[RMDB]
The record gives the reactivity of an RNA of 177 nucleotides to 2A3 and DMS.
For 2A3, 5,852 sequencing reads were counted.
For DMS, 3,853 sequencing reads were counted.
DMS adducts were read by reverse transcription with MarathonRT.
The reactions ran in a buffer of 150 mM KOAc, 10 mM MgCl2 and 150 mM bicine (pH 8.5), at 24 C.
RNA sequence: GGGAACGACUCGAGUAGAGUCGAAAAGGUCGGUGUUUCGACACCGACCACUUACCGAGAAUGUACCUCGGUAUAUAAAACAAACCCUUGGAAACAAGGGAAUACGAAUCGUGUUCGCACGAUUCAACAACAUAGCCGUAUUCGUACGGCUAUGUUGAAAAGAAACAACAACAACAAC
Reactivity to 2A3 in 0.01 (KOAc 150mM, MgCl2 10mM, bicine 150mM(pH8.5), 24C), signal-to-noise 3, nucleotides 027 to 126: g010g000u000c010g030g000u010g020u010u070u090c180g020a010c010a000c000c000g010a000c010c000a000c000u010u010a010c000c010g010a000g000a090a210u300g040u230a100c020c000u000c020g000g010u000a010u000a000u020a020a020a000a000c020a010a080a100c000c000c000u010u000g030g010a060a060a000c000a000a000g010g000g030a010a000u060a030c050g000a000a010u010c010g000u020g030u030u060c240g040c060a000c000g010a010u010u010c000a010a030
Reactivity to DMS in 0.01 (KOAc 150mM, MgCl2 10mM, bicine 150mM(pH8.5), 24C), signal-to-noise 4, nucleotides 027 to 126: g000g020u000c000g010g010u000g010u000u000u010c180g020a070c000a000c000c000g000a000c010c000a000c130u000u000a010c010c000g000a010g020a190a170u010g010u000a080c130c010u000c000g000g000u000a010u000a050u000a060a040a070a100c140a080a110a070c000c000c010u010u000g000g000a210a110a220c010a000a000g010g000g000a060a040u010a050c180g000a010a000u000c000g020u000g010u000u010c220g000c000a000c000g000a000u000u000c010a100a180